[RMDB]
This 207-nucleotide RNA was probed chemically with DMS and 2A3. Values cover nucleotides 27 to 156. 2A3 adducts were read by reverse transcription with SuperScript II with manganese. The reactions ran in a buffer of 150 mM KOAc, 10 mM MgCl2 and 150 mM bicine (pH 8.5), at 24 C. DMS adducts were read by reverse transcription with MarathonRT.
RNA sequence: GGGAACGACUCGAGUAGAGUCGAAAAGAUUCCUCGUUGUUGAGCGAGGUUUAAACAAAUCGACCACACACACGUAGAGCCGACUACGGAUUUAUAAAUUAAGGCAUUAAGUGUGAUAAGGAGACAAAAAACGAUGUUGUGUUCGCACAACAUCGAACUAAGAUGAGCAGUUCGCUGCUCAUCUUAGAAAAGAAACAACAACAACAAC
Reactivity to DMS in 0.01 (KOAc 150mM, MgCl2 10mM, bicine 150mM(pH8.5), 24C), signal-to-noise 4, nucleotides 027 to 156: g010a300u010u020c010c000u010c050g020u000u000g010u000u000g000a110g010c040g030a090g020g010u010u000u000a030a070a170c120a060a100a110u000c010g020a180c010c020a210c040a050c030a030c050a120c020g000u000a040g000a180g040c030c020g010a180c040u000a090c030g020g010a220u010u010u000a050u010a010a040a110u000u010a040a250g000g010c020a250u020u000a080a050g030u000g010u000g020a080u010a050a080g000g000a300g010a150c100a010a040a020a100a050a180c020g000a010u000g020u000u000g020u000g010u010u020c300g010c050a000c000a020a010c020a010u010c010g000a010a110
Reactivity to 2A3 in 0.01 (KOAc 150mM, MgCl2 10mM, bicine 150mM(pH8.5), 24C), signal-to-noise 5, nucleotides 027 to 156: g070a130u200u130c000c000u000c000g000u000u030g010u000u010g000a030g000c000g010a010g020g020u020u070u070a020a030a000c060a000a000a000u010c000g020a010c000c010a010c000a000c000a000c000a000c020g000u000a000g000a010g010c010c000g060a010c000u000a000c000g030g000a010u010u300u010a220u120a070a030a020u120u140a000a010g000g010c010a000u050u230a110a050g010u010g010u010g010a000u020a060a050g130g010a050g040a030c150a060a150a010a010a020a020c020g000a000u000g010u000u000g010u010g030u050u060c180g010c080a000c000a010a000c010a000u000c000g000a020a000